[RMDB]
RNA sequence: GGGAACGACUCGAGUAGAGUCGAAAAAGCAGCAGAAGCAACACCGCGGCCAGACGCUCGUCUUCGCUGUCGUGCUCGACCGAUUGCAGCAGGCAGUCGGGAUAGAUGAACGGCUCGGGCGUUGGCGGGAUGAGGCCACGCAGCCACCGACCGACGGCCCAGUAUUUUGGUUCGCCAAAAUACUGGGAAAAGAAACAACAACAACAAC
Reactivity to 2A3 in 0.01 (KOAc 150mM, MgCl2 10mM, bicine 150mM(pH8.5), 24C), signal-to-noise 2, nucleotides 027 to 156: a000g050c060a000g010c030a010g010a120a010g030c020a030a030c030a010c060c030g050c030g080g000c030c030a070g010a090c070g030c010u050c020g040u000c030u080u090c040g020c060u060g110u140c020g040u090g080c020u080c090g040a130c010c010g000a010u020u000g000c060a120g010c050a010g170g240c000a000g080u020c000g010g020g020a020u050a020g070a030u040g090a070a040c020g030g000c060u200c040g070g030g020c020g010u000u050g010g020c090g000g010g000a070u180g070a080g020g010c010c000a010c030g010c010a030g000c030c020a050c000c020g030a030c010c000g080a080c020g080g000
About this RNA:
Structure probing data (2A3) for a 207-nucleotide construct. Reactivities are rounded to 0.1 and cut off at 0 and 3. It was measured as part of the RMDB library OK3TST.